[RMDB]
RNA sequence: GGGAACGACUCGAGUAGAGUCGAAAAUUUCUUCGCAAGGUCAAAAUGGAGCGGCUAGCCAAAAUGUCGUUGAUCUUGUGAAUAUGAUUAAGGGCGUAGUUGGUCAGUGGUACAAUGAGCAGAGCAAAACGGGCGGCGUCGUUUACAGACAGCAGCGCUGAAUCCAUCAUUUCGAUGAUGGAUUCAGAAAAGAAACAACAACAACAAC
Reactivity to 2A3 in 0.01 (KOAc 150mM, MgCl2 10mM, bicine 150mM(pH8.5), 24C), signal-to-noise 3, nucleotides 027 to 156: u030u030u000c060u010u000c000g000c010a000a010g000g000u020c000a010a060a080a220u210g110g020a080g010c020g030g000c030u050a060g110c050c050a110a100a060a110u170g010u050c010g030u020u040g000a000u000c000u000u000g010u000g000a000a020u150a090u070g060a030u090u090a060a100g040g000g000c030g010u050a030g040u070u020g060g010u080c080a040g010u020g020g040u050a050c050a060a050u100g000a040g020c030a010g010a020g010c010a000a000a070a090c020g000g040g020c010g000g000c010g000u040c010g010u050u100u060a030c010a010g030a010c030a040g040c020a020g020c010g000
Reactivity to DMS in 0.01 (KOAc 150mM, MgCl2 10mM, bicine 150mM(pH8.5), 24C), signal-to-noise 2, nucleotides 027 to 156: u010u000u010c040u010u000c030g020c010a010a030g010g030u020c020a030a070a110a170u010g020g000a150g030c040g000g010c060u000a230g070c130c120a030a090a100a140u000g030u000c050g000u000u020g010a010u000c010u010u000g000u000g010a060a060u010a070u000g010a140u020u010a080a070g020g000g030c040g050u010a090g010u010u000g010g010u020c050a080g010u010g010g010u020a030c020a070a060u000g000a100g000c070a060g000a090g020c060a080a040a090a050c030g000g000g010c020g010g030c020g030u010c020g020u000u000u000a140c050a110g000a060c030a100g020c010a080g000c080g050